[RMDB]
RNA sequence: GGGAACGACUCGAGUAGAGUCGAAAACGAACCGUUCGACGGAGGUUUUCGGCGCGGGCGAAGCGACCGGCAUCGGCGCGUCGACCCAUGCGAAUGACGCGAACGGCAUGAACGCCACGAACCUCGAUGACGACGAUAUGUUCGCAUAUCGUCGUCAAAAAGAAACAACAACAACAAC
Reactivity to 2A3 in 0.01 (KOAc 150mM, MgCl2 10mM, bicine 150mM(pH8.5), 24C), signal-to-noise 2, nucleotides 027 to 126: c020g000a010a050c000c000g010u030u050c050g140a140c000g050g040a100g050g070u000u000u010u010c090g120g000c000g000c030g020g060g000c010g010a010a000g000c050g160a300c020c000g180g150c110a120u300c000g000g000c010g000c020g000u000c020g200a260c000c000c000a000u030g070c000g000a050a020u110g010a010c020g010c010g030a000a020c000g020g000c010a040u130g040a090a050c110g000c050c030a100c060g040a040a050c000c030u010c070g030a150
Reactivity to DMS in 0.01 (KOAc 150mM, MgCl2 10mM, bicine 150mM(pH8.5), 24C), signal-to-noise 1, nucleotides 027 to 126: c070g050a190a180c000c020g020u000u000c000g010a150c010g000g020a130g020g000u000u000u000u020c040g030g030c030g070c050g040g000g040c000g010a020a030g020c000g020a170c030c000g030g000c270a090u010c010g010g010c010g000c000g000u000c000g020a090c020c000c000a030u000g000c020g020a110a040u010g000a070c040g010c000g010a020a020c000g000g000c110a040u000g000a090a080c140g010c000c000a080c220g000a080a150c040c010u000c010g010a220
This 177-nucleotide RNA was probed chemically with 2A3 and DMS. The 2A3 profile rests on 1,144 reads. The reactions ran in a buffer of 150 mM KOAc, 10 mM MgCl2 and 150 mM bicine (pH 8.5), at 24 C. The data come from the RNA Mapping Database (RMDB), library OK2TRN. For 2A3 the reverse transcriptase was SuperScript II with manganese.